[RMDB]
RNA sequence: GGGAACGACUCGAGUAGAGUCGAAAAAAUCAUCCCUGAUCAGCCGGUGUCUGCCGCCCUAUCUGAUCGGACGCCUGGGCCUAGAGCUGGGGACAGCGCGGGUGGCGCUAGCCUCCUACGCGCUGUCGUUAGACAACCCAUUCGUGGGUUGUCUAACAAAAGAAACAACAACAACAAC
Reactivity to 2A3 in 0.01 (KOAc 150mM, MgCl2 10mM, bicine 150mM(pH8.5), 24C), signal-to-noise 3, nucleotides 027 to 126: a030a000u160c050a030u030c010c000c000u030g040a080u020c010a010g030c060c010g050g000u040g030u060c050u060g080c040c030g090c030c030c010u130a140u180c050u090g070a090u120c010g000g000a000c030g000c000c040u170g070g040g000c020c020u110a090g020a020g050c040u050g000g010g050g020a000c000a000g010c000g000c010g000g010g010u010g010g000c030g000c100u060a030g000c000c000u000c000c000u110a090c020g000c010g000c000u020g000u020c000
Reactivity to DMS in 0.01 (KOAc 150mM, MgCl2 10mM, bicine 150mM(pH8.5), 24C), signal-to-noise 4, nucleotides 027 to 126: a080a060u010c140a130u010c010c000c010u000g000a060u000c030a090g010c160c050g000g010u000g000u010c070u000g020c250c060g010c060c030c040u000a110u000c070u010g010a090u000c090g000g010a060c070g010c050c020u010g020g010g000c020c040u010a090g000a130g010c030u000g010g000g020g000a010c000a000g000c000g030c000g010g000g010u000g010g010c000g020c240u010a110g000c000c000u000c020c000u010a110c060g010c000g000c010u000g010u000c020
Description
An RNA of 177 nucleotides, treated with 2A3 and DMS and read out base by base. For 2A3 the reverse transcriptase was SuperScript II with manganese. For 2A3, 3,902 sequencing reads were counted. The data come from the RNA Mapping Database (RMDB), library OK2TRN. DMS adducts were read by reverse transcription with MarathonRT.